[RMDB]
RNA sequence: GGGAACGACUCGAGUAGAGUCGAAAACACCAUGCCAGCACAUGCUGACUCAGCAUGAUCCGCUCAGCGCUGACGACACAGCGGCGCUGCUCGGCGUGGAGGUUGGUGAGGGCGCUGCUGUGGCCGAACCCCCUGCGGGAUUCGUCCCGCAGGGGGUAAAAGAAACAACAACAACAAC
Reactivity to 2A3 in 0.01 (KOAc 150mM, MgCl2 10mM, bicine 150mM(pH8.5), 24C), signal-to-noise 2, nucleotides 027 to 126: c040a030c010c010a020u080g020c000c010a030g030c030a080c010a050u050g040c000u050g100a300c140u050c250a010g020c010a000u040g060a120u060c030c060g000c060u040c060a030g030c050g030c120u100g030a030c020g010a010c010a000c000a020g020c000g000g010c010g010c020u090g160c000u020c020g040g000c030g010u100g030g130a130g100g100u140u100g010g210u050g010a020g020g000g000c010g000c000u000g010c010u000g000u010g020g000c030c030g020a040
Reactivity to DMS in 0.01 (KOAc 150mM, MgCl2 10mM, bicine 150mM(pH8.5), 24C), signal-to-noise 1, nucleotides 027 to 126: c080a090c040c070a130u000g020c020c030a100g060c060a230c020a010u000g000c010u010g010a170c250u010c020a060g000c010a020u000g000a060u010c090c060g000c020u000c060a030g000c060g040c070u010g000a130c090g030a050c010a020c000a060g000c000g000g000c020g030c020u000g000c040u000c040g000g000c000g010u010g000g000a090g000g040u000u000g040g000u000g000a080g000g000g000c010g020c020u000g000c000u000g030u000g040g020c080c040g000a110

Structure probing data (2A3 and DMS) for a 177-nucleotide construct. Conditions: 150 mM KOAc, 10 mM MgCl2 and 150 mM bicine (pH 8.5), 24 C. 2A3 is a SHAPE reagent: it acylates the 2'-hydroxyl of flexible nucleotides of all four kinds. For DMS the reverse transcriptase was MarathonRT. The data come from the RNA Mapping Database (RMDB), library OK2TST.